[RMDB]
Source: RMDB library RFM100, as collected in RNAgym. Chemical mapping of a 177-nucleotide RNA with 2A3 and DMS. For DMS, 1,156 sequencing reads were counted. Conditions: 150 mM KOAc, 10 mM MgCl2 and 150 mM bicine (pH 8.5), 24 C. DMS adducts were read by reverse transcription with MarathonRT. The 2A3 profile rests on 444 reads.
RNA sequence: GGGAACGACUCGAGUAGAGUCGAAAAUGGUAAAUUUCAUCUAAAGCUAAAUAUUGGCCGGAGACCGAUAGCGCACAAGUAGAGUGAUCGAAAGGUUAAAAGCACCUUGAAAAGGGAGUUAAAUAGCCUGAACGUAAGCUUUCGAGCUUACGUUCAGAAAAGAAACAACAACAACAAC
Reactivity to 2A3 in 0.01 (KOAc 150mM, MgCl2 10mM, bicine 150mM(pH8.5), 24C), signal-to-noise 1, nucleotides 027 to 126: u000g000g000u000a030a200a160u160u260u080c240a160u070c030u110a220a000a000g000c000u000a000a120a000u090a060u000u180g000g030c000c000g000g000a000g040a000c030c000g070a100u020a000g000c050g000c000a070c020a080a080g020u050a030g000a000g110u170g010a000u000c110g060a060a000a080g030g090u150u070a000a130a030a000g000c000a030c000c000u050u050g200a130a130a000a000g060g000g030a030g020u030u000a000a070a000u000a000g100c030
Reactivity to DMS in 0.01 (KOAc 150mM, MgCl2 10mM, bicine 150mM(pH8.5), 24C), signal-to-noise 1, nucleotides 027 to 126: u020g010g010u000a050a030a060u000u010u000c090a060u000c010u010a100a220a300g000c050u000a010a070a220u020a130u060u020g030g000c040c060g000g000a120g000a100c030c000g000a070u000a060g000c020g000c030a020c140a070a070g030u000a030g050a150g000u010g000a100u000c070g030a050a110a020g000g000u000u000a030a020a190a220g020c140a110c020c010u000u000g000a030a050a100a040g000g000g000a140g020u020u030a000a000a250u020a060g000c090